RNA sequence: GGGAACGACUCGAGUAGAGUCGAAAAAAACCAGAUUUGAUCAGGUAUGGAAUUGGUUUUCAGCUGCUGAACUUGGAAAAACUGUUACCGAGUACUGGUCGGCAUGGUAUGAACAUGCCGAGAAAGGACUGCGUAUAGUUUUCGAACUAUACGCAGUAAAAGAAACAACAACAACAAC
Reactivity to DMS in 0.01 (KOAc 150mM, MgCl2 10mM, bicine 150mM(pH8.5), 24C), signal-to-noise 4, nucleotides 027 to 126: a060a040a050c030c010a060g020a120u010u010u010g010a070u020c030a050g000g000u000a070u010g010g000a040a110u020u020g010g000u000u000u000u000c040a050g010c050u010g010c070u000g000a040a050c070u010u000g020g000a070a020a040a080a070c090u010g000u010u010a090c010c010g000a040g020u000a080c040u000g000g000u000c000g000g000c000a010u000g000g020u060a130u040g020a090a100c010a000u000g020c000c000g010a030g000a060a090a060g000g000
Reactivity to 2A3 in 0.01 (KOAc 150mM, MgCl2 10mM, bicine 150mM(pH8.5), 24C), signal-to-noise 5, nucleotides 027 to 126: a000a000a020c060c020a080g050a130u090u040u130g070a060u050c020a030g060g040u120a020u100g030g070a100a130u070u120g070g020u050u000u030u050c030a060g010c020u110g020c030u090g060a090a080c030u040u080g040g000a080a050a010a010a030c040u040g030u080u010a060c000c000g020a010g020u020a060c030u020g040g030u000c000g000g020c000a000u000g000g040u160a120u250g010a020a030c000a000u010g000c000c000g000a030g060a020a030a010g070g030
An RNA of 177 nucleotides, treated with DMS and 2A3 and read out base by base. In probing experiments dimethyl sulfate is read out at A N1 and C N3, which are open when not base-paired.